[RMDB]
RNA sequence: GGGAACGACUCGAGUAGAGUCGAAAACAGAAUUCUCCACAAGAGGUGACGGACAUUAUGGUUGGUGCCAUUAGCACUCAGAAACUGAGGUCGGUACUUAAGUCAGGUAGUACCAUACGCACCCCUGUGCGACUGCAAGAUUCGUCUUGCAGUCGCAAAAAGAAACAACAACAACAAC
Reactivity to DMS in 0.01 (KOAc 150mM, MgCl2 10mM, bicine 150mM(pH8.5), 24C), signal-to-noise 2, nucleotides 027 to 126: c090a110g020a100a080u000u000c030u020c010c070a090c100a080a090g020a080g000g020u000g030a110c070g000g010a040c090a050u000u000a070u010g000g000u000u020g000g020u010g020c010c100a140u000u000a070g010c090a120c020u000c100a040g000a160a110a080c080u000g010a030g000g020u000c110g000g000u000a010c010u000u000a040a090g000u000c130a070g010g030u000a030g030u000a040c020c010a100u000a050c090g020c020a100c010c000c000c060u010g010
Reactivity to 2A3 in 0.01 (KOAc 150mM, MgCl2 10mM, bicine 150mM(pH8.5), 24C), signal-to-noise 1, nucleotides 027 to 126: c030a000g130a120a090u100u050c050u020c010c020a060c050a050a010g080a030g020g070u010g040a080c010g070g030a040c030a060u080u170a050u160g000g070u080u060g040g000u020g020c030c010a050u040u140a030g040c010a010c040u010c010a040g160a190a300a070c080u010g010a010g040g020u020c030g020g000u030a030c000u020u080a070a020g080u080c090a000g090g030u010a000g050u030a010c000c020a010u010a050c060g010c000a010c020c010c010c000u050g000
Annotation:
This 177-nucleotide RNA was probed chemically with DMS and 2A3. The data come from the RNA Mapping Database (RMDB), library OK2TST. As a SHAPE reagent, 2A3 marks flexible, mostly unpaired nucleotides at the ribose 2'-OH. The 2A3 profile rests on 1,343 reads. For DMS the reverse transcriptase was MarathonRT. The reactions ran in a buffer of 150 mM KOAc, 10 mM MgCl2 and 150 mM bicine (pH 8.5), at 24 C. 2A3 adducts were read by reverse transcription with SuperScript II with manganese.